[RMDB]
RNA sequence: GGGAACGACUCGAGUAGAGUCGAAAACCGUAGGAGUAACUACCCACCACCCUGAACUACUCGAUAUGGAUUCGAAAGAGUCCAUAAUUCGAGCAGGGUGAGGUUACUCCUAAACGGAAAAUCAUCUUUCGGCAAGUUCGCUUGCCGAAAGAUGAAAGACAUCAAUAUACUUCGGUAUAUUGAUGUCAAAAGAAACAACAACAACAAC
Reactivity to 2A3 in 0.01 (KOAc 150mM, MgCl2 10mM, bicine 150mM(pH8.5), 24C), signal-to-noise 3, nucleotides 027 to 156: c010c010g010u020a010g010g010a000g000u010a010a010c000u070a060c070c090c060a030c010c010a000c000c020c000u000g010a070a060c060u150a040c000u300c000g000a000u000a000u000g010g010a010u000u010c010g040a110a060a070g000a040g020u000c000c000a010u010a010a060u070u030c000g000a000g000c000a000g000g000g010u000g000a000g000g000u000u000a000c000u000c000c000u000a030a000a000c010g040g020a090a070a030a100u050c000a010u020c000u000u000u000c000g020g000c000a010a010g000u050u120c190g100c170u000u000g000c000c000g000a000a000a000g000a000u000g000a000a000a000
Reactivity to DMS in 0.01 (KOAc 150mM, MgCl2 10mM, bicine 150mM(pH8.5), 24C), signal-to-noise 1, nucleotides 027 to 156: c010c000g030u000a030g010g010a050g010u000a040a010c000u010a020c070c010c020a300c120c000a060c020c010c000u010g020a150a300c030u000a130c010u000c030g040a050u000a010u010g000g000a030u000u000c010g000a220a050a210g000a020g070u010c010c010a020u000a000a050u010u000c010g000a020g000c020a040g080g020g020u000g010a000g000g000u020u000a010c010u010c030c000u000a010a010a070c060g020g000a110a060a140a130u000c010a030u010c000u000u000u000c000g000g000c000a030a030g010u000u010c300g030c010u000u000g000c000c010g000a000a000a010g010a020u010g000a010a060a060